[RMDB]
An RNA of 177 nucleotides, treated with DMS and 2A3 and read out base by base. The reactions ran in a buffer of 150 mM KOAc, 10 mM MgCl2 and 150 mM bicine (pH 8.5), at 24 C. For 2A3, 1,568 sequencing reads were counted. It was measured as part of the RMDB library OK1LIB.
RNA sequence: GGGAACGACUCGAGUAGAGUCGAAAAACUCAGAUUAGCGGGAGUAUAUAUUUGGGCUUUCGGAGAUACAGAGGAAUCAUGGCAGGAUGCCUAUGAGUUAGCUUCCACUCGUGUUAAUCUCACACUAUCUUUCCAGUUUCUUCGGAAACUGGAAAGAAAAAGAAACAACAACAACAAC
Reactivity to DMS in 0.01 (KOAc 150mM, MgCl2 10mM, bicine 150mM(pH8.5), 24C), signal-to-noise 1, nucleotides 027 to 126: a200c000u010c010a090g000a090u010u000a110g000c020g000g000g000a160g000u070a020u050a070u030a050u000u000u000g040g010g000c050u000u000u000c010g000g030a050g040a120u000a040c100a000g000a010g000g000a060a020u000c010a060u000g000g000c020a050g000g020a090u070g000c010c000u050a050u010g000a050g030u000u000a080g010c040u010u000c080c020a070c040u000c000g000u000g030u000u000a040a300u000c010u000c060a110c100a140c180u000a030
Reactivity to 2A3 in 0.01 (KOAc 150mM, MgCl2 10mM, bicine 150mM(pH8.5), 24C), signal-to-noise 4, nucleotides 027 to 126: a000c030u030c010a010g010a110u110u110a030g020c010g040g050g030a020g090u000a040u010a010u010a060u170u060u100g070g030g000c040u040u010u020c010g180g080a090g020a080u240a070c090a020g100a010g030g130a060a040u030c000a030u060g000g000c000a020g120g210a110u170g000c000c000u050a040u060g020a030g040u000u120a010g030c000u100u020c000c000a020c010u010c010g100u040g020u050u050a040a110u000c010u030c000a060c000a010c030u190a100